Chemical mapping of a 177-nucleotide RNA with 2A3 and DMS. It was measured as part of the RMDB library OK2TST. The reactions ran in a buffer of 150 mM KOAc, 10 mM MgCl2 and 150 mM bicine (pH 8.5), at 24 C. DMS adducts were read by reverse transcription with MarathonRT. For DMS, 2,417 sequencing reads were counted.
RNA sequence: GGGAACGACUCGAGUAGAGUCGAAAAAUACCGCCGCGGCCUGGCGCAGGUGGUCUUCCUUGAGCCGCUGCAGGGUGAUGUCGCGGGCCACGCCGGUGUAGUGCAGCGGCUUGCCCAGGGCGUCGCAGACGUGGAUGCAUUUCGAUGCAUCCACGUCAAAAGAAACAACAACAACAAC
Reactivity to 2A3 in 0.01 (KOAc 150mM, MgCl2 10mM, bicine 150mM(pH8.5), 24C), signal-to-noise 1, nucleotides 027 to 126: a000u070a000c000c020g030c030c030g030c030g030g090c010c020u010g010g000c060g010c050a070g000g030u030g010g010u020c010u040u010c010c000u020u060g050a000g000c000c000g000c010u010g000c000a080g060g020g130u050g030a170u110g040u100c070g010c060g140g000g060c010c020a030c020g060c020c020g140g060u110g060u100a090g060u030g000c020a000g030c000g000g000c000u000u010g010c000c000c000a000g040g010g010c050g120u080c020g000c060a060
Reactivity to DMS in 0.01 (KOAc 150mM, MgCl2 10mM, bicine 150mM(pH8.5), 24C), signal-to-noise 2, nucleotides 027 to 126: a040u000a090c020c010g000c000c020g020c000g010g000c010c040u000g010g000c040g020c020a080g040g010u000g000g000u000c100u000u000c010c010u000u010g000a010g010c000c010g050c000u000g010c010a050g000g040g000u000g010a080u010g010u000c050g020c080g010g000g000c200c050a060c070g020c040c000g020g010u010g000u010a080g030u000g000c020a030g000c010g000g000c000u000u000g020c100c010c030a050g030g020g020c090g020u000c120g000c160a130